[RMDB]
RNA sequence: GGGAACGACUCGAGUAGAGUCGAAAAGAUAUGGAACGUCGGUGGGAGAUUAAGGAUCGGAAACGAUCCGAUGAUCUUUGAUCACCAGACGUUCCUAAGUCAAAAGUCUGCAGUUCGCUGCAGACAAGAAAUGUCAAUUGUUCGCAAUUGACAUUUCAAAAGAAACAACAACAACAAC
Reactivity to 2A3 in 0.01 (KOAc 150mM, MgCl2 10mM, bicine 150mM(pH8.5), 24C), signal-to-noise 3, nucleotides 027 to 126: g010a020u040a030u140g010g000a000a000c010g020u000c020g040g020u020g030g070g020a210g010a010u020u020a080a070g020g000a000u000c000g010g020a060a040a050c010g000a010u000c020c000g010a020u130g000a010u010c030u230u140u200g140a180u130c030a000c000c010a010g000a000c000g010u000u000c000c000u000a000a000g000u010c020a050a010a100a240g010u000c000u010g000c000a030g000u050u180c280g080c140u000g000c010a010g000a000c000a000a010
Reactivity to DMS in 0.01 (KOAc 150mM, MgCl2 10mM, bicine 150mM(pH8.5), 24C), signal-to-noise 5, nucleotides 027 to 126: g010a050u000a300u030g010g010a010a010c000g020u000c010g020g040u010g010g000g010a020g020a010u010u010a140a300g010g000a010u000c000g030g010a090a100a220c010g000a000u000c000c000g020a080u000g000a020u000c000u000u010u010g000a130u010c000a010c000c000a200g040a010c000g030u000u000c000c000u010a010a110g000u010c050a160a170a160a220g010u000c000u000g000c010a020g010u000u010c230g020c020u000g010c010a000g010a000c000a030a040